Structure probing data (DMS) for a 177-nucleotide construct. The reactions ran in a buffer of 150 mM KOAc, 10 mM MgCl2 and 150 mM bicine (pH 8.5), at 24 C. For DMS, 972 sequencing reads were counted. For DMS the reverse transcriptase was MarathonRT. Reactivities are given for positions 27 through 126.
RNA sequence: GGGAACGACUCGAGUAGAGUCGAAAACGGUGUUCAUGGGCAUGCUCGUGCGCGGCGUGCUCCAGGGCUCGACGAGCAUGGGUUCGCCCGGCAUCGAGGAGAUCCGCUGGAUCAAGCCGGUGCGCGACCGUGCGGCCUGAUUCGUCAGGCCGCACGGAAAAGAAACAACAACAACAAC
Reactivity to DMS in 0.01 (KOAc 150mM, MgCl2 10mM, bicine 150mM(pH8.5), 24C), signal-to-noise 2, nucleotides 027 to 126: c080g000g040u000g020u000u000c080a160u020g030g000g020c010a210u000g000c060u000c010g100u000g020c020g030c050g000g000c000g010u000g000c000u000c010c140a170g010g000g020c020u000c030g040a040c000g000a030g000c020a020u010g000g020g000u000u000c140g020c010c030c000g000g020c000a010u000c040g000a050g000g010a300g000a020u000c010c000g070c220u030g060g020a020u000c020a010a300g000c230c000g030g000u000g000c030g000c100g010a070